[RMDB]
RNA sequence: GGGAACGACUCGAGUAGAGUCGAAAAGAACUCAGACCAACGGCUAAGGUUGAACAGGGACUGACCAGAAUCGUCGAAGCUGCUCCCAUCCAUGCUAUCGUCGCUGGCCGGAUGCUCCUCGGUGGUCAACCAGUGCGUACUUCGGUACGCACUGGUUAAAAGAAACAACAACAACAAC
Reactivity to DMS in 0.01 (KOAc 150mM, MgCl2 10mM, bicine 150mM(pH8.5), 24C), signal-to-noise 1, nucleotides 027 to 126: g040a100a070c100u000c050a110g000a150c010c020a050a100c100g010g000c050u000a090a120g000g010u000u000g000a120a080c130a090g030g000g030a040c040u000g010a050c030c040a070g020a060a130u000c000g030u000c030g010a060a150g000c050u000g040c110u000c010c030c090a040u010c200c050a080u010g000c020u020a070u000c060g040u000c030g010c100u010g000g040c040c000g000g000a070u010g010c110u000c070c040u000c010g000g000u000g000g000u000c020